Chemical mapping of a 177-nucleotide RNA with DMS and 2A3. The RNA was probed in 150 mM KOAc, 10 mM MgCl2 and 150 mM bicine (pH 8.5) at 24 C. It was measured as part of the RMDB libraries RFM100 and RFMREP. For 2A3 the reverse transcriptase was SuperScript II with manganese.
RNA sequence: GGGAACGACUCGAGUAGAGUCGAAAAUAUUAAUAGGACCUACACCUGUCAACGUAAUUGGAAGGAAUCUGAUGACUCAGCUUGGUUGCACCUUAAAUUUCCCCAUUAGUCCUAUUGAAACUGUACCCCUGAUUCAGCAAUUCGUUGCUGAAUCAGGAAAAGAAACAACAACAACAAC
Reactivity to DMS in 0.01 (KOAc 150mM, MgCl2 10mM, bicine 150mM(pH8.5), 24C), signal-to-noise 2, nucleotides 027 to 126: u030a100u010u010a040a000u000a020g000g000a020c010c090u000a190c120a050c030c020u000g020u010c110a030a150c100g000u000a060a100u010u010g020g000a050a050g010g000a160a080u010c040u010g030a110u000g000a060c090u010c070a080g040c070u010u030g030g040u030u030g000c050a080c050c070u010u030a010a070a180u000u010u000c020c000c000c160a110u020u030a090g010u000c000c000u000a050u000u000g000a040a020a090c180u040g020u010a140c050c060
Reactivity to 2A3 in 0.01 (KOAc 150mM, MgCl2 10mM, bicine 150mM(pH8.5), 24C), signal-to-noise 3, nucleotides 027 to 126: u070a000u010u070a010a000u010a040g000g000a010c000c040u050a040c070a040c010c040u130g020u150c070a080a040c070g080u060a110a150u080u120g060g030a070a050g050g040a000a060u040c020u040g080a050u070g030a080c040u000c080a010g010c020u050u060g030g030u030u040g010c020a060c000c000u040u030a010a120a140u090u040u050c000c000c000c000a040u050u080a020g000u000c010c000u020a020u010u020g000a050a070a040c040u090g020u110a070c010c000